[RMDB]
RNA sequence: GGGAACGACUCGAGUAGAGUCGAAAAAGAUUGGUAUAGCUUUUGGGUAUAAUUUGCUACAAGUAGGUAUACCUUGUGGUUUUUUACUUGCUGAUUUGACAGUAGUGGUAGCUGAAUUCGGGUUUGAGGUAUAGGGUGUAUUCGUACACCCUAUACCAAAAGAAACAACAACAACAAC
Reactivity to 2A3 in 0.01 (KOAc 150mM, MgCl2 10mM, bicine 150mM(pH8.5), 24C), signal-to-noise 4, nucleotides 027 to 126: a000g130a070u150u150g040g020u060a060u060a120g030c030u130u080u020u080g060g030g030u020a040u070a210a280u200u100u190g010c010u110a220c010a070a030g080u080a000g020g130u050a060u060a030c000c000u000u030g060u040g030g000u000u060u000u050u080u080a030c060u030u100g010c010u010g050a140u160u210u210g100a090c000a000g030u100a020g020u020g170g020u070a030g000c020u010g060a070a080u090u090c030g060g010g030u000u000u130g020a010